[RMDB]
RNA sequence: GGGAACGACUCGAGUAGAGUCGAAAAGAUAUGGAGCGAACUACGCUGAUCUACUUCGAAGAACUCGGAAACGAGGGAGAAGUAGGUUUGGCGCGCUCCUAAGUCAAAACAGGUCUUCGGACCUGAAUCCUAUAUGGGUGUUCGCACCCAUAUAGGAAAAAGAAACAACAACAACAAC
Reactivity to 2A3 in 0.01 (KOAc 150mM, MgCl2 10mM, bicine 150mM(pH8.5), 24C), signal-to-noise 3, nucleotides 027 to 126: g030a010u060a040u140g000g010a000g000c030g020a110a080c120u160a030c300g000c010u000g000a000u000c000u000a010c020u000u010c010g240a300a080g000a070a020c010u010c010g010g030a110a060a050c020g010a020g010g000g000a030g010a020a000g010u010a010g020g000u010u050u300g000g000c010g000c010g000c000u000c000c000u010a050a030g020u020c010a020a020a090a170c010a010g000g010u020c020u060u150c300g140g000a020c000c000u010g000a010a090
This 177-nucleotide RNA was probed chemically with 2A3. The 2A3 profile rests on 5,361 reads. Source: RMDB library TTRDEL, as collected in RNAgym. The RNA was probed in 150 mM KOAc, 10 mM MgCl2 and 150 mM bicine (pH 8.5) at 24 C.